The record gives the reactivity of an RNA of 177 nucleotides to 2A3 and DMS. The DMS profile rests on 967 reads. The 2A3 profile rests on 516 reads. It was measured as part of the RMDB library OK2TST.
[RMDB]
RNA sequence: GGGAACGACUCGAGUAGAGUCGAAAAAGACGGGCCAAAUUUAACAGCGGUUCAUAUUGCUGAUUCAUGCGUGUGAGACAAAUGUUUUGGGCCAUUUGAGAAGUCACAACAGGCAGGAGUAGAAUUCUCAUCCUGCUAUCUUCGGAUAGCAGGAUGAAAAAGAAACAACAACAACAAC
Reactivity to 2A3 in 0.01 (KOAc 150mM, MgCl2 10mM, bicine 150mM(pH8.5), 24C), signal-to-noise 1, nucleotides 027 to 126: a000g100a020c100g000g030g060c000c030a130a080a080u290u300u110a200a010c000a000g040c030g010g000u090u030c010a020u120a020u060u110g000c020u000g050a300u120u230c050a030u120g030c070g000u110g020u000g040a080g010a090c030a060a090a040u100g000u030u120u080u000g020g040g040c000c020a020u010u000u000g110a100g000a000a010g100u020c070a020c050a180a080c020a020g070g000c070a050g000g050a080g040u190a050g100a060a100u190u030c060
Reactivity to DMS in 0.01 (KOAc 150mM, MgCl2 10mM, bicine 150mM(pH8.5), 24C), signal-to-noise 1, nucleotides 027 to 126: a110g010a070c130g040g000g030c060c020a070a080a120u020u020u000a050a050c070a060g000c140g010g010u000u010c040a050u000a100u000u000g060c000u000g030a150u000u020c120a060u000g050c040g030u000g030u000g010a020g000a020c030a050a130a140u000g000u000u000u000u000g000g010g000c090c020a100u000u000u010g000a150g010a070a060g020u000c060a040c070a120a070c100a100g010g000c080a010g000g030a060g030u000a060g020a150a100u000u000c120